Source information:
The record gives the reactivity of an RNA of 177 nucleotides to DMS. It was measured as part of the RMDB library OK2TST.
RNA sequence: GGGAACGACUCGAGUAGAGUCGAAAAGCAGCUGGUGCAAAAGCAGGAUCCGUCAAAAGAGAAAAUCCAAGCUGCCUCUAGGUCAGAGACAUGAUCAUUAAUGUUGUAACCCAGUCUCCAGCGGAUCCUCGGAGAUGGAGUUCGCUCCAUCUCCGAGAAAAGAAACAACAACAACAAC
Reactivity to DMS in 0.01 (KOAc 150mM, MgCl2 10mM, bicine 150mM(pH8.5), 24C), signal-to-noise 1, nucleotides 027 to 126: g050c010a010g000c000u000g000g000u010g000c260a070a010a170a130g030c090a040g000g000a000u000c000c000g040u050c150a050a080a060a110g000a100g010a050a040a090a070u020c010c010a050a060g030c000u000g000c090c030u000c000u000a030g010g000u010c120a100g000a230g000a070c050a050u000g000a060u010c240a120u000u010a120a030u000g010u000u000g000u010a110a100c010c020c030a030g020u000c000u000c010c040a180g020c010g000g000a000u000c000